[RMDB]
RNA sequence: GGGAACGACUCGAGUAGAGUCGAAAAAUGUCGGCUGAAGACUUUGACGCUAUUAUUGCCGAGCAUUUCCAGCCUGGGGACUGUGUACUGGAAACUGACAUUGCGUCGUUUGAUAAAAGUGAGGACGAAGCUCAAGGACAUUCGUGUCCUUGAGCUUAAAAGAAACAACAACAACAAC
Reactivity to DMS in 0.01 (KOAc 150mM, MgCl2 10mM, bicine 150mM(pH8.5), 24C), signal-to-noise 1, nucleotides 027 to 126: a010u020g010u000c030g000g050c040u000g000a140a060g010a040c060u000u010u000g010a120c070g010c010u000a070u000u020a180u010u000g000c020c020g020a090g010c100a010u000u020u030c080c020a080g020c020c040u000g000g000g020g010a150c050u000g000u000g010u000a100c050u010g000g000a080a040a050c040u000g020a050c070a170u000u000g040c070g020u000c000g030u000u000u000g000a110u010a050a080a090a100g020u000g020a060g010g000a080c150g000